Structure probing data (2A3) for a 207-nucleotide construct.
Reactivities are rounded to 0.1 and cut off at 0 and 3.
The data come from the RNA Mapping Database (RMDB), library M2RFPK.
The 2A3 profile rests on 540 reads.

RNA sequence: GGGAACGACUCGAGUAGAGUCGAAAAGCGUAACGGCUGGGUGUAACCCAACUCUAAGUGUGCUGAUUAGCGGGCUUGACUCCGUAACAAAUAGGCACUGGUGGUAAAAAGCAUCCCACCUACUCACAAAGCUCCAAAUUCUUCGGAAUUUGGAGAAGUUUUACCCUAGCUUCGGCUAGGGUAAAACAAAAGAAACAACAACAACAAC
Reactivity to 2A3 in 0.01 (KOAc 150mM, MgCl2 10mM, bicine 150mM(pH8.5), 24C), signal-to-noise 1, nucleotides 027 to 156: g000c010g000u020a060a000c100g090g000c100u090g010g010g010u090g050u080a070a070c010c000c020a060a080c070u120c090u170a050a070g080u050g010u050g160c010u010g020a110u000u120a100g010c000g010g020g040c050u150u110g070a060c020u030c040c010g030u030a070a000c000a020a090a040u190a040g000g010c000a000c040u020g000g020u060g020g000u040a060a060a050a060a040g000c010a010u060c060c020c000a000c000c010u050a030c020u070c030a100c080a100a070a000g050c000u000c010c000a000a030a030u000u000c000u000u010c070g050g000a000a000u000u000u000g000g000a000g000a000a000